[RMDB]
RNA sequence: GGGAACGACUCGAGUAGAGUCGAAAACGAGUGGAUGUUCCGCCCCAAGGGGAGCCGAGUGAGGCUUAUCCCGGGGAACUCGGUAAUUCGCCCCGAAAUGAGGACUCCGGGGUCCCCUUCCGAAGGAGAACGUCAUGGUUCGCCAUGACGAAAAGAAACAACAACAACAAC
Reactivity to DMS in 0.01 (KOAc 150mM, MgCl2 10mM, bicine 150mM(pH8.5), 24C), signal-to-noise 6, nucleotides 027 to 129: c030g020a010g050u020g000g040a090u010g000u000u000c000c000g010c070c000c000c050a090a040g020g000g030g040a030g020c020c020g000a180g030u060g000a110g010g020c020u020u050a020u000c020c030c000g000g000g020g010a020a110c030u020c020g000g000u040a100a120u070u000c100g020c000c010c010c040g000a040a060a110u090g010a040g010g000a180c030u000c040c030g010g000g000g000u000c000c020c000c020u030u040c070c080g030a110a080g000g000a080g010a080a110
Reactivity to 2A3 in 0.01 (KOAc 150mM, MgCl2 10mM, bicine 150mM(pH8.5), 24C), signal-to-noise 9, nucleotides 027 to 129: c040g010a050g040u110g020g050a110u130g050u130u030c010c010g030c000c010c010c010a040a040g000g000g000g000a000g010c010c010g050a080g190u300g090a080g020g000c000u020u050a070u070c000c000c000g000g000g000g000a000a000c010u000c000g000g040u120a120a160u140u140c060g070c020c010c020c010g050a060a040a110u230g000a020g010g010a010c000u000c000c000g000g010g000g030u030c000c010c000c010u020u010c050c020g040a060a020g060g030a060g030a070a010